[RMDB]
RNA sequence: GGGAACGACUCGAGUAGAGUCGAAAAGAUAUGGAUGUAAGAGGUCCCACCAAUGAUGUCGGAAACGAUUGAGGUGUGGACUACCCACCUUACAUCCUAAGUCAAAACCACAGGUUCGCCUGUGGAACUAUGAUUGAGUCUUCGGACUCAAUCAUAGAAAAGAAACAACAACAACAAC
Reactivity to DMS in 0.01 (KOAc 150mM, MgCl2 10mM, bicine 150mM(pH8.5), 24C), signal-to-noise 4, nucleotides 027 to 126: g000a070u020a300u000g000g010a020u000g000u000a000a010g010a090g010g010u000c010c000c000a000c010c000a120a160u010g030a120u010g010u000c000g000g000a230a110a160c010g000a010u000u000g000a110g010g030u020g020u010g010g000a040c010u010a030c030c040c100a300c100c000u000u000a010c000a010u000c000c000u010a020a040g010u010c060a060a020a120a210c010c010a010c000a010g000g010u000u000c280g020c000c000u000g030u000g000g000a040a110
Reactivity to 2A3 in 0.01 (KOAc 150mM, MgCl2 10mM, bicine 150mM(pH8.5), 24C), signal-to-noise 3, nucleotides 027 to 126: g030a020u100a060u200g000g010a010u020g010u010a010a000g000a020g040g000u010c040c000c000a000c000c010a090a240u270g090a040u130g050u020c010g000g040a100a080a100c020g030a010u020u040g040a030g050g000u030g090u300g050g000a010c000u010a010c010c000c010a060c010c010u000u000a000c000a010u020c000c000u010a100a020g060u020c030a040a030a090a160c010c000a000c000a010g050g040u090u090c220g130c070c000u010g000u010g000g000a000a030